This 177-nucleotide RNA was probed chemically with DMS and 2A3.
2A3 adducts were read by reverse transcription with SuperScript II with manganese.
The reactions ran in a buffer of 150 mM KOAc, 10 mM MgCl2 and 150 mM bicine (pH 8.5), at 24 C.
The data come from the RNA Mapping Database (RMDB), library OK2TRN.
DMS adducts were read by reverse transcription with MarathonRT.
The DMS profile rests on 1,840 reads.
Values cover nucleotides 27 to 126.
[RMDB]
RNA sequence: GGGAACGACUCGAGUAGAGUCGAAAAGUGACCGCCACGCCAACCUCGGCAGCGGCCAGAUUGAUCCUGACCUGCUGGUGGCUGCCGUCAAGGCGGCCGGCGCGCCGGUGAUCUGCGAAACCGCCGAGCGGAAAUUAUGUUUCGACAUAAUUUCCGCAAAAGAAACAACAACAACAAC
Reactivity to DMS in 0.01 (KOAc 150mM, MgCl2 10mM, bicine 150mM(pH8.5), 24C), signal-to-noise 2, nucleotides 027 to 126: g020u020g010a080c110c020g020c020c020a170c070g000c010c010a080a160c190c070u000c020g020g020c000a020g030c000g000g010c010c000a000g000a100u000u010g000a120u000c050c070u000g010a070c070c020u000g010c000u000g020g000u000g000g010c010u000g000c000c000g010u000c050a090a290g000g000c010g010g020c180c020g000g010c010g030c150g050c090c030g010g010u010g010a040u000c050u000g010c070g000a070a080a090c070c030g000c030c030g000a170
Reactivity to 2A3 in 0.01 (KOAc 150mM, MgCl2 10mM, bicine 150mM(pH8.5), 24C), signal-to-noise 2, nucleotides 027 to 126: g030u010g060a190c030c000g000c020c030a120c010g000c010c010a050a040c020c040u010c000g000g040c000a000g000c020g070g000c020c000a030g060a080u080u180g030a040u100c070c060u160g100a140c010c040u070g050c000u000g010g120u040g230g000c020u010g000c010c000g040u020c040a040a040g020g000c030g000g000c030c040g000g000c030g000c030g060c010c000g040g050u050g000a120u070c050u210g060c030g030a110a040a050c020c000g000c020c030g050a020